Structure probing data (2A3) for a 177-nucleotide construct. Source: RMDB library RFM100, as collected in RNAgym. The 2A3 profile rests on 484 reads.
RNA sequence: GGGAACGACUCGAGUAGAGUCGAAAACGAUGGGGCCGGGAGGGCCAAGCGUAUCAUCGAUCUGUCGGUCGGUAUGGUAAGUGACGCAAGCUGUAUGGUAAGUGACGCAAGCUGAAAGAAGAGCGCUCAGAAACGUCGAAUUCGUUCGACGUUUCUGAAAAGAAACAACAACAACAAC
Reactivity to 2A3 in 0.01 (KOAc 150mM, MgCl2 10mM, bicine 150mM(pH8.5), 24C), signal-to-noise 2, nucleotides 027 to 126: c000g040a050u050g070g000g000g050c040c000g010g020g000a090g030g000g060c000c000a000a020g040c020g130u160a060u070c000a000u000c060g070a000u020c050u200g300u300c050g010g010u000c000g000g000u030a080u060g040g000u010a090a040g050u050g110a030c040g000c110a060a050g000c040u030g030u240a150u190g070g000u070a130a250g040u020g160a000c000g000c000a140a000g000c000u020g020a160a000a000g050a020a020g000a030g070c000g000c000u000